Conditions: 150 mM KOAc, 10 mM MgCl2 and 150 mM bicine (pH 8.5), 24 C. This 177-nucleotide RNA was probed chemically with 2A3 and DMS. Values are in units of 0.01, from 0 to 300, in steps of 10. For 2A3 the reverse transcriptase was SuperScript II with manganese.

RNA sequence: GGGAACGACUCGAGUAGAGUCGAAAAUCCGGUGUUCCCGAUCCCGAAGUUAGAGCCCCCGAGGUUUGCCAAGCCGACAUUGAGGUUGCCGAGGCCGGCCAAGUCGAGGAUCGUCGUGCCGGCGCCGGCCUUGGUAGAUCUUCGGAUCUACCAAGGCAAAAGAAACAACAACAACAAC
Reactivity to 2A3 in 0.01 (KOAc 150mM, MgCl2 10mM, bicine 150mM(pH8.5), 24C), signal-to-noise 6, nucleotides 027 to 126: u030c000c010g010g010u110g030u030u060c020c010c010g000a040u040c000c010c020g050a080a020g100u110u180a060g020a030g080c020c000c000c000c010g010a030g020g050u080u120u190g040c000c010a040a010g020c010c010g050a050c040a060u070u140g040a030g040g020u030u050g000c000c010g030a060g000g000c040c020g020g000c010c010a130a030g050u020c000g020a110g070g050a130u080c010g020u020c030g030u110g010c010c000g010g000c020g030c030c020g050
Reactivity to DMS in 0.01 (KOAc 150mM, MgCl2 10mM, bicine 150mM(pH8.5), 24C), signal-to-noise 4, nucleotides 027 to 126: u030c000c000g000g010u030g000u010u000c010c000c000g010a070u000c020c010c030g000a040a100g010u010u020a060g010a150g040c030c020c090c010c060g020a180g000g000u010u000u010g020c040c040a100a140g010c060c010g000a040c120a090u020u020g000a160g010g000u010u020g000c000c000g010a190g000g020c030c070g000g000c000c050a130a090g000u000c010g020a150g000g020a080u000c040g010u010c080g000u040g020c000c000g020g010c090g020c060c040g000
About this RNA: Source: RMDB library OK1LIB, as collected in RNAgym. 2A3 is a SHAPE reagent: it acylates the 2'-hydroxyl of flexible nucleotides of all four kinds. The DMS profile rests on 9,426 reads.